Annotation:
This 207-nucleotide RNA was probed chemically with DMS and 2A3.
RNA sequence: GGGAACGACUCGAGUAGAGUCGAAAAGGGGAACCCACUAUCUUUAGUCGGAUAGUAUCCUUACGUGAAUACAUAGCGUGAGGAAGGCAGACCCAGGGAACUGAAACAUCUAAGUACCUGGAGGAAGAGAAAGAAAAAUCGAUUUCCUGAGUAGCGGCCGUAGAGAUUAGUUCGCUAAUCUCUACGGAAAAGAAACAACAACAACAAC
Reactivity to DMS in 0.01 (KOAc 150mM, MgCl2 10mM, bicine 150mM(pH8.5), 24C), signal-to-noise 2, nucleotides 027 to 156: g000g000g060g020a150a150c090c000c050a180c040u000a040u000c000u000u000u000a150g000u000c300g000g010a030u000a040g030u010a180u000c000c010u010u000a000c030g050u020g000a210a250u000a120c250a090u000a300g000c020g020u000g000a060g100g030a060a110g010g020c050a130g020a060c030c000c000a060g000g000g000a060a250c070u020g000a060a060a100c090a050u000c040u010a090a120g050u010a130c000c020u000g000g030a140g000g030a120a100g040a120g000a040a050a140g000a030a040a040a070a270u010c010g000a150u000u000u000c020c030u020g000a150g040u000a100g000c030g050g000
Reactivity to 2A3 in 0.01 (KOAc 150mM, MgCl2 10mM, bicine 150mM(pH8.5), 24C), signal-to-noise 3, nucleotides 027 to 156: g010g000g010g000a020a020c020c000c000a000c010u010a010u000c020u030u110u100a090g060u120c030g010g010a010u000a010g020u030a090u020c010c000u000u000a010c000g030u030g040a070a020u070a080c040a020u040a020g000c000g000u010g000a000g000g020a020a030g040g010c060a020g030a080c010c000c010a000g030g010g000a040a030c020u030g020a140a150a060c050a140u040c020u050a090a020g010u010a030c030c000u030g020g040a020g030g000a050a020g050a000g040a030a110a030g110a050a100a050a020a020u080c040g050a060u050u020u040c000c010u030g040a030g050u040a010g060c080g030g020
Reactivities are rounded to 0.1 and cut off at 0 and 3. The 2A3 profile rests on 2,209 reads. Source: RMDB library PDB130, as collected in RNAgym. For 2A3 the reverse transcriptase was SuperScript II with manganese. The RNA was probed in 150 mM KOAc, 10 mM MgCl2 and 150 mM bicine (pH 8.5) at 24 C.